An RNA of 177 nucleotides, treated with 2A3 and DMS and read out base by base.
RNA sequence: GGGAACGACUCGAGUAGAGUCGAAAAACGUGCGAAAGCACGGACAGCUCGUGAGGAUAUACAACACUGCUUCGGCAGUGUAUUAAGAUCACAUGAGGAUCACCCAUGUAGAAGGCACGAGCUGAUAAUUUACUCAUGCUUUCGAGCAUGAGUAAAUAAAAGAAACAACAACAACAAC
Reactivity to 2A3 in 0.01 (KOAc 150mM, MgCl2 10mM, bicine 150mM(pH8.5), 24C), signal-to-noise 4, nucleotides 027 to 126: a000c010g000u010g000c000g060a150a010a030g000c000a000c010g010g010a010c010a010g000c000u000c000g000u000g020a020g020g060a080u020a000u000a090c020a030a010c000a010c000u000g010c000u040u060c070g110g000c000a000g000u000g010u000a010u000u080a030a020g010a010u020c010a010c030a150u200g090a200g160g020a040u050c020a090c020c020c000a000u060g000u010a040g010a120a020g060g030c010a000c000g000a000g010c000u010g000a000u010a010
Reactivity to DMS in 0.01 (KOAc 150mM, MgCl2 10mM, bicine 150mM(pH8.5), 24C), signal-to-noise 6, nucleotides 027 to 126: a080c000g030u010g000c000g000a170a080a220g020c000a000c000g000g010a210c020a010g000c000u000c000g020u000g010a060g000g000a090u000a090u000a030c090a100a100c010a010c000u000g000c000u000u020c200g030g010c000a010g000u000g010u000a010u010u000a120a080g010a020u000c010a050c050a100u000g020a130g000g010a050u000c070a240c040c030c030a100u000g010u000a020g010a100a240g010g000c000a010c000g010a010g020c010u000g000a040u000a060

For DMS the reverse transcriptase was MarathonRT. It was measured as part of the RMDB library OK2TRN.